[RMDB]
RNA sequence: GGGAACGACUCGAGUAGAGUCGAAAAGGCUAUUUUGCUGUUCGGAGGUGAAUAUCGUAGUCUUUUGGCUACGGUACAGGAUCGCUCUUUUGAGCACCUCCAACUGUACCGAUAGCAUAUAGCCGAAGGGUGUCAGCUUCUUCGGAAGCUGGUACCCAAAAGAAACAACAACAACAAC
Reactivity to 2A3 in 0.01 (KOAc 150mM, MgCl2 10mM, bicine 150mM(pH8.5), 24C), signal-to-noise 9, nucleotides 027 to 126: g000g000c000u000a010u030u300u040u020g000c010u010g120u150u040c010g010g010a020g010g030u040g070a120a040u030a000u050c000g000u000a000g010u010c000u050u240u130u300g000g000c000u000a000c000g000g000u010a020c010a020g010g020a110u210c110g000c010u020c010u070u230u140u300g000a000g000c000a020c010c020u010c030c010a020a010c020u050g030u080a200c000c010g000a000u010a000g000c000a000u000a000u000a010g000c000c000g000a020a020
Reactivity to DMS in 0.01 (KOAc 150mM, MgCl2 10mM, bicine 150mM(pH8.5), 24C), signal-to-noise 7, nucleotides 027 to 126: g010g000c010u000a000u000u020u010u000g000c000u000g010u020u000c020g010g020a060g000g000u000g010a170a250u010a010u000c000g010u000a000g010u000c000u030u050u020u040g010g020c000u000a000c000g000g000u000a010c300a060g010g000a040u030c200g010c010u010c010u010u020u010u050g010a020g010c000a070c070c050u010c300c110a110a020c020u000g000u070a030c020c010g010a020u000a000g000c000a020u010a010u000a010g010c000c000g000a080a090